[RMDB]
Conditions: 150 mM KOAc, 10 mM MgCl2 and 150 mM bicine (pH 8.5), 24 C.
Structure probing data (DMS and 2A3) for a 207-nucleotide construct.
Reactivities are given for positions 27 through 156.
RNA sequence: GGGAACGACUCGAGUAGAGUCGAAAAGACGUGGAGGUUGCGCGCCCUCCUUUGCGCGUAAGUACGUCGAAAUUCGGUGCUUUGGAUCGCACCGUUAGAUCCAUUUGAUAUCCGCUUGGUGCCGCGGUUGGGCAUUUACACUUACCCGAAAGGGGAAACUAGUACCAUGAUUCGUCAUGGUACUAGUAAAAGAAACAACAACAACAAC
Reactivity to DMS in 0.01 (KOAc 150mM, MgCl2 10mM, bicine 150mM(pH8.5), 24C), signal-to-noise 3, nucleotides 027 to 156: g000a040c020g020u000g010g020a090g040g030u010u010g020c010g020c020g030c050c090c060u000c100c050u000u020u000g020c000g020c010g060u010a040a080g000u000a030c020g020u000c020g000a050a070a130u000u000c010g030g040u000g030c030u000u010u010g020g020a100u000c230g000c020a160c030c040g020u010u000a070g010a110u000c030c010a140u010u020u000g010a160u000a100u000c030c000g020c080u010u000g040g010u000g020c020c040g010c050g000g030u000u010g010g010g010c040a080u000u000u000a110c090a070c090u000u000a210c010c000c010g010a060a080a200g020g000g000g000a060a110
Reactivity to 2A3 in 0.01 (KOAc 150mM, MgCl2 10mM, bicine 150mM(pH8.5), 24C), signal-to-noise 5, nucleotides 027 to 156: g020a010c020g020u040g030g120a100g090g150u060u060g000c000g000c000g030c040c010c020u220c000c050u070u050u130g000c010g000c010g000u000a010a050g070u060a010c040g000u010c030g010a020a050a060u100u080c020g000g000u010g010c030u190u120u160g080g040a110u160c070g000c010a020c020c000g000u010u030a020g000a030u000c010c020a070u070u040u160g120a100u070a060u090c000c000g030c070u030u070g010g000u010g020c000c020g040c040g020g000u110u030g030g000g000c000a010u060u050u120a050c070a020c030u080u140a070c000c010c010g050a080a050a020g000g010g010g000a010a050